Chemical mapping of a 207-nucleotide RNA with 2A3 and DMS. For DMS the reverse transcriptase was MarathonRT. Source: RMDB library RNAMAK, as collected in RNAgym. The RNA was probed in 150 mM KOAc, 10 mM MgCl2 and 150 mM bicine (pH 8.5) at 24 C.

RNA sequence: GGGAACGACUCGAGUAGAGUCGAAAACCCGCUUUCGAGCGGGAUAUGCCGUAGGAUAUGCGUCUCGGCAUUCGAGGUUCGUUCGAAAGAGCGAACUACCCACCGAAUGAACUACCGAGACCAUAUCCUAAACGGGGACUUUUAGAUUCGUCUAAAAUCUUUACGUAGUAUUCGUACUACGUAAAGAAAAAGAAACAACAACAACAAC
Reactivity to 2A3 in 0.01 (KOAc 150mM, MgCl2 10mM, bicine 150mM(pH8.5), 24C), signal-to-noise 5, nucleotides 027 to 156: c000c010c020g010c030u080u090u080c260g130a010g010c000g010g010g020a030u070a070u250g070c000c010g030u010a000g000g010a000u010a010u010g080c150g010u000c000u000c000g000g020c000a000u000u000c000g000a020g010g010u000u000c000g000u020u000c000g040a080a060a020g010a010g010c010g000a010a000c000u050a080c070c050c030a050c020c010g000a000a000u020g000a050a050c080u110a070c300c000g000a000g000a020c000c000a000u000a000u000c000c000u000a000a000a000c010g010g000g030g040a030c040u070u090u070u090a040g030a090u100u080c130g040u050c110u090a030a100a170a080
Reactivity to DMS in 0.01 (KOAc 150mM, MgCl2 10mM, bicine 150mM(pH8.5), 24C), signal-to-noise 3, nucleotides 027 to 156: c000c000c000g010c010u000u000u010c270g010a070g050c000g000g010g010a030u010a010u000g020c000c000g010u000a020g010g010a020u010a010u000g030c190g040u010c010u000c000g030g000c010a050u000u000c010g000a100g030g040u010u000c000g060u000u010c010g010a180a140a300g010a040g020c000g010a000a010c000u000a020c010c000c020a300c120c010g000a040a000u010g000a100a140c050u010a240c010c020g000a030g020a000c010c000a000u020a000u000c000c010u000a000a010a050c030g000g020g020g010a120c100u000u000u000u000a060g030a150u000u000c210g080u000c020u000a010a050a090a110